The record gives the reactivity of an RNA of 177 nucleotides to DMS and 2A3.
High DMS reactivity at an A or C suggests that its Watson-Crick edge is free.
DMS adducts were read by reverse transcription with MarathonRT.
Reactivities are given for positions 27 through 126.
The reactions ran in a buffer of 150 mM KOAc, 10 mM MgCl2 and 150 mM bicine (pH 8.5), at 24 C.
RNA sequence: GGGAACGACUCGAGUAGAGUCGAAAACAGCGGGCUCCCAGAAAUCCGACAUGCAGGAUCAGAGCAAUCGCAGCAAGGCGGAUGCACUCUCAUCGUCCACUAAACGUCGCGGUUUCAGCGGACGCAACUCAGCAUACGUGUUCGCACGUAUGCUGAGAAAAGAAACAACAACAACAAC
Reactivity to DMS in 0.01 (KOAc 150mM, MgCl2 10mM, bicine 150mM(pH8.5), 24C), signal-to-noise 2, nucleotides 027 to 126: c100a080g030c090g000g000g000c030u010c010c000c030a260g000a040a050a060u040c040c000g000a060c100a090u000g010c160a070g010g000a030u000c110a030g000a090g000c100a070a100u000c010g030c060a060g000c090a160a130g010g000c000g010g000a040u010g020c160a120c100u000c040u010c080a040u010c080g000u010c030c060a130c070u000a050a080a070c140g000u000c130g050c100g000g000u010u000u000c070a020g010c050g000g000a050c060g000c140a060a070
Reactivity to 2A3 in 0.01 (KOAc 150mM, MgCl2 10mM, bicine 150mM(pH8.5), 24C), signal-to-noise 2, nucleotides 027 to 126: c010a010g050c050g040g060g000c050u020c020c020c000a000g040a010a030a000u060c010c010g030a010c040a050u110g030c040a050g080g000a030u040c040a020g030a020g020c020a020a060u080c020g000c030a030g070c060a120a040g220g010c010g030g000a010u020g000c050a050c030u070c010u040c040a060u060c030g050u090c040c020a030c050u120a100a080a050c070g020u040c020g070c140g070g000u010u030u030c030a030g000c070g050g000a020c030g000c000a040a060